[RMDB]
RNA sequence: GGGAACGACUCGAGUAGAGUCGAAAAACGACCGUGCUUGGCGGUUGCGUGACUUUUCGGGGUCGUCUUGGAGUGACCGUGUUGGGUUGCCGUGCCACGGUUUUCGUCACGGCUUUCGUCGCCGCCGUAAAUUUACGACUUUCGAGUCGUAAAUUUAAAAAGAAACAACAACAACAAC
Reactivity to DMS in 0.01 (KOAc 150mM, MgCl2 10mM, bicine 150mM(pH8.5), 24C), signal-to-noise 5, nucleotides 027 to 126: a110c090g010a070c030c010g000u020g010c110u020u010g010g010c000g000g010u000u010g030c060g010u010g010a050c030u000u000u020u010c020g010g010g000g000u000c020g010u000c050u020u020g010g000a130g020u010g000a070c000c030g010u000g010u010u000g010g000g010u010u000g000c000c010g010u000g010c140c170a040c030g000g020u040u010u050u030c030g000u000c010a030c010g000g000c010u000u010u020c010g010u010c080g010c000c010g000c000c020g010
Reactivity to 2A3 in 0.01 (KOAc 150mM, MgCl2 10mM, bicine 150mM(pH8.5), 24C), signal-to-noise 6, nucleotides 027 to 126: a000c060g050a040c020c010g060u090g060c200u100u230g090g000c010g020g000u010u080g010c010g050u090g020a040c000u040u040u100u100c050g040g050g000g020u030c010g040u020c030u040u120g110g030a130g040u080g020a040c030c060g100u030g050u070u100g040g010g000u050u090g020c010c010g020u030g060c080c040a050c040g050g000u060u040u110u150c020g010u030c010a000c010g010g010c000u030u100u050c020g010u000c020g000c010c010g000c010c000g010